The record gives the reactivity of an RNA of 177 nucleotides to 2A3. 2A3 adducts were read by reverse transcription with SuperScript II with manganese. The reactions ran in a buffer of 150 mM KOAc, 10 mM MgCl2 and 150 mM bicine (pH 8.5), at 24 C.

RNA sequence: GGGAACGACUCGAGUAGAGUCGAAAAAUAACAUGACGCAAUGCAACAGUGGCGACAUUUUCAUCAUUAACCACCGUGACUUGUAUCGAUUUCAACUUCAACAAGAUGGCAUCAUAUGUUAUAUCCAGCCUCGCAUGCGGUUCGCCGCAUGCGAGGCAAAAGAAACAACAACAACAAC
Reactivity to 2A3 in 0.01 (KOAc 150mM, MgCl2 10mM, bicine 150mM(pH8.5), 24C), signal-to-noise 2, nucleotides 027 to 126: a000u120a000a000c000a010u020g050a000c120g000c000a000a070u230g000c030a160a060c090a270g080u010g070g020c060g000a030c090a120u050u200u250u290c050a120u030c080a120u110u160a000a000c000c000a060c000c030g010u000g060a050c040u000u080g000u160a210u190c080g030a000u000u210u130c140a110a180c060u110u100c000a160a190c000a010a020g000a150u120g010g000c000a110u070c000a000u270a020u300g030u020u020a000u000a000u030c010c000a000